An RNA of 207 nucleotides, treated with DMS and 2A3 and read out base by base.
Conditions: 150 mM KOAc, 10 mM MgCl2 and 150 mM bicine (pH 8.5), 24 C.
The DMS profile rests on 2,631 reads.
For 2A3 the reverse transcriptase was SuperScript II with manganese.
RNA sequence: GGGAACGACUCGAGUAGAGUCGAAAAGGGUUUGAGCCAUCGCCCGAAUAGGAUGGAUGAUACAAGUCGCCAUUGUACGCGACGUAGUACGUACUCAUUAGUGCGAAAGCACGGUUAGUCCGACUAGGCAGGGACGAUCUUCUGUCAAUACUUAGAAAAUUAUGCCAGGGUUCGCCCUGGCAUAAUUAAAAGAAACAACAACAACAAC
Reactivity to DMS in 0.01 (KOAc 150mM, MgCl2 10mM, bicine 150mM(pH8.5), 24C), signal-to-noise 2, nucleotides 027 to 156: g000g060g040u000u000u010g030a080g000c000c040a070u000c040g020c000c000c030g020a130a140u020a070g000g010a080u010g020g000a120u000g010a170u000a050c050a110a140g020u000c010g040c000c030a190u000u000g000u000a100c130g000c000g020a070c030g030u000a150g030u000a020c010g000u000a060c040u000c050a070u030u000a060g000u010g010c010g010a110a190a220g030c000a020c010g000g040u000u000a090g020u000c000c030g000a180c050u000a100g030g040c030a100g020g050g030a030c030g010a060u020c050u000u000c050u000g010u010c010a020a060u000a100c060u000u010a170g000a090a090
Reactivity to 2A3 in 0.01 (KOAc 150mM, MgCl2 10mM, bicine 150mM(pH8.5), 24C), signal-to-noise 2, nucleotides 027 to 156: g050g000g020u120u080u210g180a010g070c060c000a020u040c010g040c000c000c000g050a120a160u270a070g010g050a010u070g000g010a030u070g000a000u050a090c080a120a040g030u010c000g000c030c000a070u110u190g080u090a060c060g000c020g000a000c020g010u000a000g000u010a100c000g000u010a000c010u020c030a020u000u120a080g000u000g040c000g090a120a000a000g000c000a000c000g020g000u020u050a000g000u000c020c000g010a030c010u020a040g020g000c020a020g030g000g070a120c050g010a070u000c000u150u030c000u030g050u000c000a020a100u090a170c050u110u070a060g070a030a150